[RMDB]
RNA sequence: GGGAACGACUCGAGUAGAGUCGAAAAAGGACACGAAAUACAAGGUUUAUACGGAUAUCGCUGGCGUUCCAACUGUAUGCGAAGGCAUCACAGGCCCGGACGUUAUCAAGGGGAAAACCUAUACCCGGUCAGAGUGCGACGCGCUUUUAACCAAGCAGAAGUACAGAUGUUUCGACAUCUGUACUUCAAAAGAAACAACAACAACAAC
Reactivity to 2A3 in 0.01 (KOAc 150mM, MgCl2 10mM, bicine 150mM(pH8.5), 24C), signal-to-noise 2, nucleotides 027 to 156: a000g050g000a040c050a000c140g050a040a000a050u080a020c010a030a000g030g040u010u030u030a180u050a030c050g020g020a020u020a050u140c050g040c140u020g020g010c010g010u060u000c020c010a060a030c030u000g000u020a000u000g000c020g090a140a090g190g000c000a010u040c080a010c000a000g040g050c020c020c030g000g010a010c000g010u050u040a060u120c100a050a090g020g010g010g000a050a000a000a000c000c000u030a040u040a080c000c040c000g000g020u000c020a020g010a010g080u040g010c050g090a090c060g010c010g040c030u030u070u030u100a050a040c040c020a010a000g000c000a020
Reactivity to DMS in 0.01 (KOAc 150mM, MgCl2 10mM, bicine 150mM(pH8.5), 24C), signal-to-noise 1, nucleotides 027 to 156: a060g020g000a020c040a100c050g030a170a130a100u000a060c020a100a090g000g010u000u000u000a010u000a110c110g010g000a060u000a020u000c140g060c010u000g000g020c020g030u000u030c040c000a070a180c000u000g010u000a040u010g010c020g010a260a130g020g020c010a020u000c030a020c030a020g000g000c070c150c090g000g000a060c000g030u000u020a060u010c070a070a150g000g020g030g000a080a040a050a070c020c020u000a090u000a100c060c060c000g010g000u010c030a070g000a070g020u010g020c040g020a080c180g010c000g020c030u000u010u000u020a020a070c040c010a000a120g050c060a230